[RMDB]
RNA sequence: GGGAACGACUCGAGUAGAGUCGAAAAUUAUGAAACAUAAGGGCGGUGAUUCAACUGACUUCAUAGCCCUCAUUAUGGCUUAUGGCAAUUGCACAUUUGGUGCUCCAGAUGAUGCCUCUCGGUUACUACAGUUUCACCUUCGGGUGAAACAAAAGAAACAACAACAACAAC
Reactivity to 2A3 in 0.01 (KOAc 150mM, MgCl2 10mM, bicine 150mM(pH8.5), 24C), signal-to-noise 6, nucleotides 027 to 129: u210u060a080u110g110a020a060a050c040a010u050a040a020g020g000g000c020g060g020u020g010a080u060u050c050a150a060c100u180g030a020c050u030u010c020a010u040a030g000c010c000c000u020c000a030u020u140a060u090g040g000c040u070u100a050u090g080g000c010a070a160u140u150g020c010a010c020a070u060u070u140g150g000u080g010c010u030c010c000a010g020a030u100g010a040u040g030c000c000u000c000u010c000g060g020u060u050a040c020u050a010c040a040
Reactivity to DMS in 0.01 (KOAc 150mM, MgCl2 10mM, bicine 150mM(pH8.5), 24C), signal-to-noise 4, nucleotides 027 to 129: u050u040a020u020g020a030a030a030c090a000u010a040a030g030g010g020c060g020g070u020g040a040u040u020c060a220a080c190u000g030a000c120u020u010c000a000u030a190g010c010c010c110u040c170a080u000u000a040u040g000g030c150u030u020a060u030g010g020c220a050a120u000u000g010c070a000c030a030u050u070u070g030g000u020g020c230u010c100c030a030g000a070u020g000a080u000g020c020c060u030c020u030c000g040g000u020u050a090c060u000a070c140a090